[RMDB]
RNA sequence: GGGAACGACUCGAGUAGAGUCGAAAAGUCUUUGCGAUGGCGAUCUGAUGAUUACGUCAAAAGAAGUAAAUCCGUACAUUAUGCAGAAUCUUGGCAAUAACGAAUAUAUGGCCUACGGCUGCAACGCCGUGUACAAGCAUAUCAAGAUCCGCAAGCGCCUAGGACAGUUCUUCGGAACUGUCCUAGGAAAAGAAACAACAACAACAAC
Reactivity to 2A3 in 0.01 (KOAc 150mM, MgCl2 10mM, bicine 150mM(pH8.5), 24C), signal-to-noise 1, nucleotides 027 to 156: g040u100c030u020u030u050g030c040g050a130u030g030g020c020g040a030u000c020u040g040a040u040g040a040u110u120a030c030g030u110c170a100a210a050a000g110a110a000g040u190a030a090a090u020c050c030g000u000a000c000a090u080u070a060u100g040c010a000g030a030a240u040c010u070u030g020g000c020a040a200u160a090a060c110g110a110a000u150a060u030a060u130g130g000c000c000u000a030c000g000g030c000u010g000c000a000a050c100g030c040c030g000u020g000u000a040c000a000a000g020c060a010u060a000u210c030a010a010g000a060u000c020c000g050c040a040a000g000c060g020